[RMDB]
RNA sequence: GGGAACGACUCGAGUAGAGUCGAAAAGAUAUGGAACCAUCUUAUGCGUGAACAGCUAUGAAGUCGGAAACGAUGGAGCUGUCACGUUAUCAUGGUUCCUAAGUCAAAACGGACCUUCGGGUCCGAACGAAUUAGAUACCUUCGGGUAUCUAAUUCGAAAAGAAACAACAACAACAAC
Reactivity to 2A3 in 0.01 (KOAc 150mM, MgCl2 10mM, bicine 150mM(pH8.5), 24C), signal-to-noise 6, nucleotides 027 to 126: g020a020u070a030u160g000g000a000a000c010c000a010u020c030u070u140a110u270g020c000g020u010g040a240a060c020a000g060c000u060a300u300g040a020a010g010u020c020g020g050a090a050a070c020g000a000u030g020g010a000g000c000u000g000u010c000a000c000g000u000u020a010u020c030a000u000g000g010u010u000c000c000u010a070a010g030u010c020a030a010a080a140c010g010g010a000c000c000u070u150c300g150g000g000u020c010c000g000a030a000
Reactivity to DMS in 0.01 (KOAc 150mM, MgCl2 10mM, bicine 150mM(pH8.5), 24C), signal-to-noise 4, nucleotides 027 to 126: g010a030u000a300u010g010g000a020a000c000c000a010u000c050u000u000a030u020g030c010g010u000g000a110a040c010a000g010c010u000a250u020g010a110a200g010u000c010g010g010a140a090a180c010g020a020u000g000g010a000g020c000u000g000u000c000a000c010g000u000u000a010u000c090a000u000g010g000u000u000c000c000u000a020a080g000u010c030a080a080a100a220c020g000g000a010c000c000u000u010c220g030g010g010u000c000c000g010a020a060

Structure probing data (2A3 and DMS) for a 177-nucleotide construct. For 2A3, 13,790 sequencing reads were counted. DMS adducts were read by reverse transcription with MarathonRT. It was measured as part of the RMDB library TTRDEL. Values are in units of 0.01, from 0 to 300, in steps of 10. Values cover nucleotides 27 to 126.